[RMDB]
RNA sequence: GGGAACGACUCGAGUAGAGUCGAAAAGAUAUGGACGUAGCAAGUCUUCCCUGCUACCCACCUCGGAAACGAGAGGCAGGGAGAUGAUGACCUACGUCCUAAGUCAAAAGGCUUCUUCGGAAGCCAAUCUCGUGAAAGAGUUCGCUCUUUCACGAGAAAAAGAAACAACAACAACAAC
Reactivity to DMS in 0.01 (KOAc 150mM, MgCl2 10mM, bicine 150mM(pH8.5), 24C), signal-to-noise 2, nucleotides 027 to 126: g000a070u010a300u000g020g010a010c000g050u000a000g000c000a040a230g010u000c010u000u010c000c000c000u010g010c030u010a070c070c020c040a300c100c010u000c000g010g000a120a060a220c010g010a000g000a120g000g000c000a010g000g020g010a040g020a000u020g000a010u000g000a150c300c000u000a010c000g010u000c000c010u020a000a000g000u000c120a090a040a180a050g000g000c000u000u010c000u000u020c150g010g010a020a000g020c000c020a040a010
Reactivity to 2A3 in 0.01 (KOAc 150mM, MgCl2 10mM, bicine 150mM(pH8.5), 24C), signal-to-noise 2, nucleotides 027 to 126: g070a050u150a090u300g010g000a020c010g010u020a010g050c040a160a210g070u000c010u240u300c000c000c000u000g030c000u070a180c000c040c030a020c050c010u000c010g010g080a120a100a050c000g010a020g000a040g000g020c020a010g060g290g000a010g000a070u080g030a090u050g060a030c000c000u020a000c000g000u020c000c000u000a000a000g060u030c020a080a040a060a080g010g020c020u000u000c000u090u130c300g240g000a020a010g000c000c000a000a010
Source: RMDB library TTRDEL, as collected in RNAgym. This 177-nucleotide RNA was probed chemically with DMS and 2A3. Values cover nucleotides 27 to 126. 2A3 adducts were read by reverse transcription with SuperScript II with manganese.